[RMDB]
RNA sequence: GGGAACGACUCGAGUAGAGUCGAAAAACUAAUCCAAAGCAAGUAUAGGAGAACAGGUUUUUAACUAUUUUUAGGCAGAUAAAAACUAGUAUUUGACAGUCUAACACUAACUGAACAAUAAGUGUUAAAAACUCCCUCCUGUUCGCAGGAGGGAGAACAUUAUCGACACGUUCGCGUGUCGAUAAUGAAAAGAAACAACAACAACAAC
Reactivity to DMS in 0.01 (KOAc 150mM, MgCl2 10mM, bicine 150mM(pH8.5), 24C), signal-to-noise 1, nucleotides 027 to 156: a120c080u000a150a150u000c030c010a060a080a300g000c010a020a110g000u010a100u000a190g030g000a110g010a060a140c130a110g000g020u000u000u000u000u060a080a070c040u010a060u010u010u020u000u000a020g020g010c040a020g000a190u000a010a030a020a030a010c040u000a070g040u000a160u000u000u000g000a060c060a020g000u000c030u020a020a060c000a000c000u000a000a150c060u000g030a080a110c300a050a040u000a030a040g000u010g040u000u000a070a010a080a080a070c030u000c000c000c000u000c000c040u000g000u000u000c220g040c040a040g030g000a000g020g010g000a000g040a000a020
Reactivity to 2A3 in 0.01 (KOAc 150mM, MgCl2 10mM, bicine 150mM(pH8.5), 24C), signal-to-noise 2, nucleotides 027 to 156: a000c050u090a080a020u000c010c010a030a000a010g020c010a020a010g020u040a020u090a130g020g010a030g030a070a050c170a250g010g060u040u000u000u020u030a040a010c010u020a040u010u020u010u010u020a040g070g020c050a010g040a080u050a030a020a010a020a020c070u020a010g010u010a050u020u020u040g020a010c000a000g000u000c000u000a000a000c000a000c000u000a010a000c010u000g030a010a000c000a000a010u010a010a000g000u000g020u020u030a020a100a000a020a020c000u000c000c000c000u010c000c010u020g020u070u080c190g000c070a000g000g000a000g010g000g000a000g000a000a000
An RNA of 207 nucleotides, treated with DMS and 2A3 and read out base by base. The reactions ran in a buffer of 150 mM KOAc, 10 mM MgCl2 and 150 mM bicine (pH 8.5), at 24 C. The data come from the RNA Mapping Database (RMDB), library M2RFOK. Values cover nucleotides 27 to 156.